Notes
Structure probing data (2A3 and DMS) for a 177-nucleotide construct.
RNA sequence: GGGAACGACUCGAGUAGAGUCGAAAAUCGCCAGAUCCGUCCCAGUAGGCGGCCGAACGCGCCUGUUGGCCGGGCAGCCUGACUGGAUAGGUACCGUCGGGCCGGAUGUGUGAGGCGCAUGGGGACGUACAUACGUCAAGUUCGCUUGACGUAUGUAAAAAGAAACAACAACAACAAC
Reactivity to 2A3 in 0.01 (KOAc 150mM, MgCl2 10mM, bicine 150mM(pH8.5), 24C), signal-to-noise 9, nucleotides 027 to 126: u080c020g050c020c000a040g010a150u050c040c010g020u020c010c000c010a020g080u080a060g070g250c020g030g060c010c010g050a090a030c030g010c000g030c030c020u100g070u220u240g060g020c020c000g010g010g000c010a040g020c000c000u050g040a080c070u150g030g020a070u170a080g070g030u110a080c010c020g090u040c030g010g000g010c000c010g050g020a100u130g050u000g010u010g070a030g010g000c010g000c020a020u070g030g000g010g000a010c010g010
Reactivity to DMS in 0.01 (KOAc 150mM, MgCl2 10mM, bicine 150mM(pH8.5), 24C), signal-to-noise 9, nucleotides 027 to 126: u030c040g010c020c010a160g010a090u020c080c000g000u000c020c000c010a130g010u030a070g010g000c010g020g020c010c010g000a260a070c030g010c040g010c020c010u010g020u020u030g010g020c090c020g000g010g010c040a160g010c000c000u000g000a070c080u050g020g020a090u020a050g000g010u030a050c070c050g010u000c010g010g000g010c000c020g000g010a050u020g010u010g000u000g000a290g000g010c000g020c030a080u070g010g010g000g010a040c040g000
Source: RMDB library OK1LIB, as collected in RNAgym. The reactions ran in a buffer of 150 mM KOAc, 10 mM MgCl2 and 150 mM bicine (pH 8.5), at 24 C.